[RMDB]
RNA sequence: GGGAACGACUCGAGUAGAGUCGAAAAGAUAUGGACGGAGAGCGAUAAGCUGUGGCUCGGAAACGAGCCCAGCUUUUGACGCUUUAAGUCCUAAGUCAAAAGAUAUGCCAGUUCGCUGGCAUAUCAACUUGAAUGGGUAGUUCGCUACCCAUUCAAGAAAAGAAACAACAACAACAAC
Reactivity to 2A3 in 0.01 (KOAc 150mM, MgCl2 10mM, bicine 150mM(pH8.5), 24C), signal-to-noise 2, nucleotides 027 to 126: g000a020u050a040u090g020g000a010c000g010g100a030g010a000g100c020g060a110u050a270a030g000c010u020g130u300g060g000c000u000c000g020g030a060a030a020c000g000a000g020c000c000c020a000g030c000u000u000u020u020g000a000c000g000c000u030u010u010a030a000g000u000c010c000u010a030a050g020u000c020a080a040a000a140g010a000u010a000u000g000c000c010a000g010u040u090c300g120c100u010g000g030c000a000u000a000u000c000a000a000
Reactivity to DMS in 0.01 (KOAc 150mM, MgCl2 10mM, bicine 150mM(pH8.5), 24C), signal-to-noise 3, nucleotides 027 to 126: g000a030u000a280u000g000g020a020c010g000g070a140g000a010g020c000g030a140u000a020a000g010c000u000g010u010g040g000c000u000c000g020g000a040a060a110c010g010a020g000c000c000c010a000g010c000u000u000u010u000g020a180c030g010c000u000u000u000a130a170g000u000c000c000u000a040a110g010u010c020a130a050a110a180g000a010u010a000u000g000c010c000a020g000u000u000c230g010c010u000g000g000c000a010u000a000u000c010a030a100
Source: RMDB library TTRDEL, as collected in RNAgym. The record gives the reactivity of an RNA of 177 nucleotides to 2A3 and DMS. The DMS profile rests on 2,969 reads. The RNA was probed in 150 mM KOAc, 10 mM MgCl2 and 150 mM bicine (pH 8.5) at 24 C. DMS adducts were read by reverse transcription with MarathonRT.